[RMDB]
RNA sequence: GGGAACGACUCGAGUAGAGUCGAAAAUCUGAAUGCCAAGCGAAGUCUGUGAGCAUCAACCCCACUCCAUGGGUUUGUCUCCUGGUACCCAAAGAAAUACUGAGUUGUGUCCACAACAUGGCUGGGUCUUCAGACCCCUGGCUCACCAUGUGGGUGACCGAAAAUACUGAUUCGUCAGUAUUUUCGGAAAAGAAACAACAACAACAAC
Reactivity to 2A3 in 0.01 (KOAc 150mM, MgCl2 10mM, bicine 150mM(pH8.5), 24C), signal-to-noise 3, nucleotides 027 to 156: u040c040u040g060a060a020u060g020c000c030a050a040g030c060g210a120a050g090u070c020u060g090u080g080a020g020c010a020u080c030a010a080c010c000c020c030a040c070u050c030c070a070u100g000g000g000u050u060u080g070u010c020u040c020c020u020g010g080u100a090c020c040c010a060a140a040g080a020a100a050u230a060c170u150g050a050g090u000u010g020u030g010u010c040c010a050c000a100a030c000a030u020g010g060c080u010g020g020g000u010c030u170u100c060a090g050a300c000c010c010c010u020g030g010c000u000c010a000c010c000a040u060g020u040g070g010g000u010g020a020
Reactivity to DMS in 0.01 (KOAc 150mM, MgCl2 10mM, bicine 150mM(pH8.5), 24C), signal-to-noise 2, nucleotides 027 to 156: u010c040u000g030a050a040u020g000c020c000a050a060g040c050g000a110a110g010u000c010u010g060u010g010a080g020c000a060u000c040a090a110c020c000c020c080a100c070u000c030c060a120u010g000g030g000u010u010u000g010u020c050u000c050c050u000g040g000u010a050c020c020c020a070a140a120g040a080a090a100u010a160c110u010g010a200g030u030u000g070u000g000u010c020c030a040c050a000a050c010a020u000g010g020c090u000g050g020g030u000c100u010u000c070a070g020a060c020c040c020c020u000g010g000c130u000c070a040c030c020a080u000g000u000g000g010g010u000g020a300

This 207-nucleotide RNA was probed chemically with 2A3 and DMS. The RNA was probed in 150 mM KOAc, 10 mM MgCl2 and 150 mM bicine (pH 8.5) at 24 C. For DMS, 3,079 sequencing reads were counted. DMS adducts were read by reverse transcription with MarathonRT.